[RMDB]
RNA sequence: GGGAACGACUCGAGUAGAGUCGAAAAAAGGAAUUAGCGUGCCUUCAUGCUAAGGCUUUGAUAUCUGCUAAAACCCGGUGCAUUCAUCAAUGCAGGUUAAGCCAAAGGGAUGUCCCGACCGGAGGCCAAAAGUUCGCUACGUUCGCGUAGCGAACAACUAAAAGUGUGACUUCGGUCACACUUUUAGAAAAGAAACAACAACAACAAC
Reactivity to 2A3 in 0.01 (KOAc 150mM, MgCl2 10mM, bicine 150mM(pH8.5), 24C), signal-to-noise 1, nucleotides 027 to 156: a000a000g070g010a040a020u040u010a010g010c070g020u050g040c030c030u100u140c040a070u130g000c030u050a000a070g030g040c000u110u080u020g090a130u100a060u110c170u170g020c120u130a110a130a080a100c000c000c000g060g050u150g020c000a020u020u190c000a110u090c020a090a150u070g010c000a000g130g060u060u130a090a050g030c000c000a000a020a040g050g010g010a020u030g040u060c000c000c000g000a010c000c020g000g000a000g000g000c000c010a000a170a000a000g000u000u000c000g000c010u010a010c000g020u000u030c300g000c000g130u000a010g000c000g000a000a000c010a000a000
Reactivity to DMS in 0.01 (KOAc 150mM, MgCl2 10mM, bicine 150mM(pH8.5), 24C), signal-to-noise 1, nucleotides 027 to 156: a070a030g010g000a080a180u010u000a040g020c010g020u010g020c050c020u000u010c030a150u000g030c120u000a060a130g020g010c000u000u000u020g000a140u000a000u000c050u000g000c020u000a110a070a040a090c010c000c020g050g060u000g030c000a080u000u000c110a060u000c040a100a300u000g000c000a080g000g000u000u000a080a030g000c080c000a030a290a240g010g000g000a060u000g000u000c000c000c000g010a120c010c000g010g000a300g000g000c000c070a020a030a070a070g020u000u000c000g000c000u000a010c010g000u000u010c260g020c060g000u000a010g010c000g000a010a010c000a050a070

Structure probing data (2A3 and DMS) for a 207-nucleotide construct. 2A3 adducts were read by reverse transcription with SuperScript II with manganese. Values cover nucleotides 27 to 156. The data come from the RNA Mapping Database (RMDB), library M2RFPK. For 2A3, 581 sequencing reads were counted. The reactions ran in a buffer of 150 mM KOAc, 10 mM MgCl2 and 150 mM bicine (pH 8.5), at 24 C.